This 177-nucleotide RNA was probed chemically with 2A3 and DMS. The 2A3 profile rests on 3,847 reads. Values cover nucleotides 27 to 126. For 2A3 the reverse transcriptase was SuperScript II with manganese. The reactions ran in a buffer of 150 mM KOAc, 10 mM MgCl2 and 150 mM bicine (pH 8.5), at 24 C.
RNA sequence: GGGAACGACUCGAGUAGAGUCGAAAAGAAAAUGGUAGCAACGGUUCCAAAGGAGCCGAAGUUCAAAGCUAAGGCAUCGAUCUAAAAUGCUACCAUAAAGGUAACGAGCUUGGCAAUGAACAAAAAACUAUUUUGUAUUCUUCGGAAUACAAAAUAGAAAAGAAACAACAACAACAAC
Reactivity to 2A3 in 0.01 (KOAc 150mM, MgCl2 10mM, bicine 150mM(pH8.5), 24C), signal-to-noise 3, nucleotides 027 to 126: g080a010a180a010a020u010g000g010u010a000g000c010a030a040c030g020g010u020u000c030c020a280a180a200g010g000a000g000c010c020g040a050a020g000u000u010c020a020a010a010g000c000u060a020a050g090g030c010a140u030c030g040a050u060c020u270a060a050a070a090u100g000c000u000a000c000c000a000u020a010a070a000g030g000u010a080a020c010g010a020g010c000u050u050g010g000c020a010a120u040g020a000a000c000a030a090a010a010a020a000
Reactivity to DMS in 0.01 (KOAc 150mM, MgCl2 10mM, bicine 150mM(pH8.5), 24C), signal-to-noise 4, nucleotides 027 to 126: g000a070a070a120a030u000g010g010u020a020g030c000a190a300c020g010g010u000u000c000c030a060a110a180g020g000a010g020c010c010g010a040a070g000u000u000c020a040a010a260g000c010u000a050a070g010g000c030a070u000c090g020a050u010c090u040a050a080a090a090u000g010c000u000a010c000c000a010u010a010a080a070g000g010u010a090a120c050g000a040g000c020u000u010g010g000c020a040a260u000g000a000a000c010a000a080a090a060a050a100